[RMDB]
RNA sequence: GGGAACGACUCGAGUAGAGUCGAAAAGAUAUGGACCCACCGAAAGCUGAACUACUCUCGGGUGAGAGCUCGGAAACGAGCUCUCAUCUCUAGCGUGGAGCAGCUAGUAGCUGUGGGUCCUAAGUCACUUCAUAUAUCCCUUCGGGGAUAUAUGAAGAAAAGAAACAACAACAACAAC
Reactivity to DMS in 0.01 (KOAc 150mM, MgCl2 10mM, bicine 150mM(pH8.5), 24C), signal-to-noise 2, nucleotides 027 to 126: g010a060u000a300u010g010g000a020c000c000c000a010c000c040g010a170a200a170g010c010u000g020a030a040c000u000a010c010u000c000u010c300g000g000g000u000g000a010g010a000g010c000u000c000g010g000a080a090a300c010g020a010g010c000u000c000u000c000a020u000c000u030c050u010a010g010c120g010u010g010g010a060g000c000a010g000c000u000a060g020u000a170g010c290u020g000u000g020g000g010u000c010c000u000a010a080g010u010c060a300